RNA sequence: GGGAACGACUCGAGUAGAGUCGAAAACAAGAGCAAUUUGGAGGUUAACAGCAAGAUGGAGUUGAUUAGGUCAGAUUUCUUUCACUGUCAUAAUUUUGUCACUGUUAUUUCUGCAAAGGUGGUUUCACCACAGAAAGCUUUCGUGAUCUGGCCCCCACCAGCUUUUAGGAUUCGUCCUAAAAGCUGGAAAAGAAACAACAACAACAAC
Reactivity to 2A3 in 0.01 (KOAc 150mM, MgCl2 10mM, bicine 150mM(pH8.5), 24C), signal-to-noise 2, nucleotides 027 to 156: c030a060a010g020a050g050c000a020a130u050u050u180g050g000a040g010g010u080u070a060a050c020a020g030c030a050a000g010a030u060g010g030a050g000u030u040g050a080u090u170a030g010g000u010c010a000g020a070u040u150u060c020u020u170u080c040a020c080u030g040u040c010a040u070a300a240u110u170u070u130g020u010c020a000c060u000g010u060u060a060u010u030u010c010u010g020c030a090a090a150g050g010u030g000g100u030u290u300c030a020c040c000a020c000a030g010a030a010a010g000c000u030u140u210c010g020u010g020a050u010c010u010g010g000c020c010c020c000c000a020
Reactivity to DMS in 0.01 (KOAc 150mM, MgCl2 10mM, bicine 150mM(pH8.5), 24C), signal-to-noise 1, nucleotides 027 to 156: c040a080a090g010a150g030c050a110a080u000u020u010g040g000a050g010g040u000u000a020a090c110a000g010c010a080a070g010a050u010g020g030a090g010u000u040g000a180u010u000a060g000g000u000c030a090g010a140u000u010u000c050u000u010u000c050a110c060u010g000u010c020a040u030a080a130u000u000u010u000g000u000c060a040c040u000g000u010u010a080u000u000u000c000u000g030c020a050a060a030g020g040u000g000g010u000u000u000c030a030c000c000a300c030a060g010a070a070a140g030c090u010u000u000c170g040u000g000a050u000c040u000g010g000c110c010c020c000c020a290